[RMDB]
RNA sequence: GGGAACGACUCGAGUAGAGUCGAAAAAAUCAGAAAAAAUGAGAAUCCAAAUAUCUAGGCAUUGGUGAAUAACCAGGUAUAACAAAUUAUAGCAUAACUACUUGAUGAAAUAUUGUAUGGUCAUUUUGUAUAGCCUUUGAAAUGUGAAAAAUGCAUAAUACCAUGAAAUUUUCGAAUUUCAUGGUAUAAAAGAAACAACAACAACAAC
Reactivity to DMS in 0.01 (KOAc 150mM, MgCl2 10mM, bicine 150mM(pH8.5), 24C), signal-to-noise 2, nucleotides 027 to 156: a080a070u010c050a140g020a000a080a120a060a100a080u020g000a120g010a110a070u010c030c030a070a100a100u000a050u000c060u000a100g030g040c030a140u000u020g020g000u010g020a090a040u000a050a020c010c020a050g050g000u010a030u000a060a090c020a080a040a110u010u000a100u000a060g050c020a110u010a030a130c100u000a020c020u000u010g020a090u010g020a050a050a100u000a060u000u010g010u000a050u000g010g030u000c010a040u000u000u000u000g010u010a030u010a150g010c000c060u000u000u000g000a070a060a080u020g010u000g000a030a070a040a070a090u010g020c020a040u000a080
Reactivity to 2A3 in 0.01 (KOAc 150mM, MgCl2 10mM, bicine 150mM(pH8.5), 24C), signal-to-noise 1, nucleotides 027 to 156: a000a000u160c070a060g180a040a110a000a010a010a040u120g010a030g030a040a030u050c000c030a000a090a020u130a040u010c070u020a030g000g030c020a040u070u040g010g040u040g030a030a140u140a110a000c000c010a020g010g030u080a110u050a110a030c030a030a040a000u240u110a110u130a110g000c000a020u090a160a060c000u050a020c020u090u050g020a030u040g070a050a110a000u170a030u060u050g040u100a080u050g030g030u020c030a020u000u000u000u040g000u010a000u050a010g000c000c000u040u000u000g070a050a040a000u060g020u030g090a070a040a040a020a000u130g080c110a000u240a090
The record gives the reactivity of an RNA of 207 nucleotides to DMS and 2A3. Source: RMDB library OK3TST, as collected in RNAgym. 2A3 adducts were read by reverse transcription with SuperScript II with manganese.